The record gives the reactivity of an RNA of 177 nucleotides to DMS and 2A3. The reactions ran in a buffer of 150 mM KOAc, 10 mM MgCl2 and 150 mM bicine (pH 8.5), at 24 C. It was measured as part of the RMDB library OK1LIB. As a SHAPE reagent, 2A3 marks flexible, mostly unpaired nucleotides at the ribose 2'-OH. The DMS profile rests on 2,606 reads. 2A3 adducts were read by reverse transcription with SuperScript II with manganese.

[RMDB]
RNA sequence: GGGAACGACUCGAGUAGAGUCGAAAACGGUGCUGUUGGACCGAGAUUUUGUGGAGGCCAUCGGGAGCUACGUAAAAAACUUCCUGUUGAUCGAUACGGGAGUGUACGCCCACGGCCACAGCCUGCGAAAGCGUGCAAUGUUCGCAUUGCACGCUUUAAAAGAAACAACAACAACAAC
Reactivity to DMS in 0.01 (KOAc 150mM, MgCl2 10mM, bicine 150mM(pH8.5), 24C), signal-to-noise 2, nucleotides 027 to 126: c020g000g010u000g050c030u020g030u020u010g000g000a080c010c000g000a070g010a090u000u010u030u000g080u050g010g000a160g020g000c000c050a290u050c220g000g000g000a040g030c080u010a070c050g050u050a000a030a140a100a070a030c020u000u020c000c000u010g000u020u000g040a190u020c120g000a100u000a080c060g000g000g000a010g000u010g000u000a020c000g030c040c010c010a160c190g010g000c000c000a020c050a070g000c000c030u000g000c160g000
Reactivity to 2A3 in 0.01 (KOAc 150mM, MgCl2 10mM, bicine 150mM(pH8.5), 24C), signal-to-noise 2, nucleotides 027 to 126: c000g060g060u100g030c030u040g020u190u020g080g080a160c010c000g060a130g000a190u040u030u060u040g070u100g040g120a140g000g010c000c000a060u110c070g010g010g030a050g000c050u040a020c060g050u090a010a120a000a000a000a180c040u090u020c000c000u010g000u000u120g110a300u080c160g010a000u000a070c000g000g010g010a030g000u070g020u030a010c000g030c010c000c010a000c050g020g000c010c000a000c000a050g030c000c010u050g000c000g020